[RMDB]
Notes: The data come from the RNA Mapping Database (RMDB), library TTRDES. This 177-nucleotide RNA was probed chemically with DMS. DMS adducts were read by reverse transcription with MarathonRT.
RNA sequence: GGGAACGACUCGAGUAGAGUCGAAAAAGAUAUGGAGCAGUUUGUCAGCUUGGAGGUUGCGAUGAAAGACUUCGGAAACGAAGUCUGGAGCAACUGAGGAGCUUGGAUUUAACUGCUCCUAAGUCAACAAGAUGGUUUAGUUCGCUAAACCAUCUUGAAAAGAAACAACAACAACAAC
Reactivity to DMS in 0.01 (KOAc 150mM, MgCl2 10mM, bicine 150mM(pH8.5), 24C), signal-to-noise 5, nucleotides 027 to 126: a060g000a040u000a300u000g000g000a030g020c000a030g030u000u000u000g020u000c000a040g010c000u010u010g010g010a300g000g020u000u000g010c010g000a140u030g010a190a170a030g000a010c000u010u000c010g010g010a120a110a170c020g010a030a000g000u000c000u000g000g000a040g020c000a020a010c010u010g020a300g000g000a010g000c010u000u020g020g010a030u010u010u000a030a030c030u000g010c010u000c000c000u000a020a050g020u000c030a060a290